[RMDB]
RNA sequence: GGGAACGACUCGAGUAGAGUCGAAAAGGCGCGCCAGACUGCUUCGGCCCGGCUUGGGCGAGCCCGGUGUGUGCGCGACACAUGCCUGACUGUUCGCGCACCGUGGGCGCCACACCGGGACCGCCGAUCACUUUGGCGAGUUCGCUCGCCAAAGUGAAAAAGAAACAACAACAACAAC
Reactivity to DMS in 0.01 (KOAc 150mM, MgCl2 10mM, bicine 150mM(pH8.5), 24C), signal-to-noise 1, nucleotides 027 to 126: g030g000c030g010c090g030c000c020a020g000a100c050u000g000c050u030u010c060g010g000c000c000c020g000g020c070u010u020g000g010g000c000g020a100g000c000c000c000g030g000u000g010u020g000u040g000c000g000c000g000a120c140a000c020a190u000g000c000c020u000g000a090c300u020g050u040u000c020g030c300g000c020a000c070c120g000u000g030g000g000c000g000c010c000a040c010a020c000c000g000g000g000a040c030c030g000c010c010g000a070
Reactivity to 2A3 in 0.01 (KOAc 150mM, MgCl2 10mM, bicine 150mM(pH8.5), 24C), signal-to-noise 2, nucleotides 027 to 126: g050g010c010g000c000g050c030c010a030g050a080c080u100g050c010u040u070c030g060g020c000c040c010g020g040c090u160u170g070g000g030c030g020a040g020c000c020c000g000g000u020g000u010g010u090g020c020g000c000g170a020c000a010c010a040u110g030c010c020u070g110a230c060u170g180u270u180c080g000c000g000c050a020c020c100g000u080g010g040g000c000g000c000c000a000c000a000c000c000g010g000g010a040c000c000g000c010c000g040a050